[RMDB]
RNA sequence: GGGAACGACUCGAGUAGAGUCGAAAAGAUAUGGAGCGUCCCAUGGGCACUUGGACCUCGGAAACGAGCUAGUGUAGUGGGAGCGCUCCUAAGUCAAAACAUCUCCGGGCUUCGGCCCGGAGAUGAACAUUACAACUCUCUUCGGAGAGUUGUAAUGAAAAGAAACAACAACAACAAC
Reactivity to 2A3 in 0.01 (KOAc 150mM, MgCl2 10mM, bicine 150mM(pH8.5), 24C), signal-to-noise 1, nucleotides 027 to 126: g030a020u100a040u150g000g000a000g000c010g000u010c000c010c020a000u110g190g300g060c010a010c010u050u190g080g110a300c060c000u030c020g000g010a050a100a010c000g000a020g080c030u030a000g010u000g020u030a060g010u030g000g000g030a140g100c010g030c010u000c000c000u010a010a020g000u000c010a000a100a100a090c010a010u020c000u040c010c010g040g030g010c030u140u220c300g130g000c020c040c000g020g010a010g020a000u000g000a000a000
Reactivity to DMS in 0.01 (KOAc 150mM, MgCl2 10mM, bicine 150mM(pH8.5), 24C), signal-to-noise 3, nucleotides 027 to 126: g000a040u000a300u000g000g000a010g010c000g010u010c000c000c000a040u000g010g020g000c000a000c000u000u000g010g000a070c300c010u000c000g000g010a130a090a140c010g010a010g000c020u000a010g010u010g000u000a300g010u000g010g000g000a040g000c030g010c020u000c000c000u000a010a060g000u000c010a120a110a180a220c000a000u000c000u000c000c010g000g000g000c000u000u010c240g030g010c000c000c000g010g000a000g000a000u000g010a010a160
This 177-nucleotide RNA was probed chemically with 2A3 and DMS. Reactivities are rounded to 0.1 and cut off at 0 and 3. 2A3 adducts were read by reverse transcription with SuperScript II with manganese. For DMS the reverse transcriptase was MarathonRT. Conditions: 150 mM KOAc, 10 mM MgCl2 and 150 mM bicine (pH 8.5), 24 C.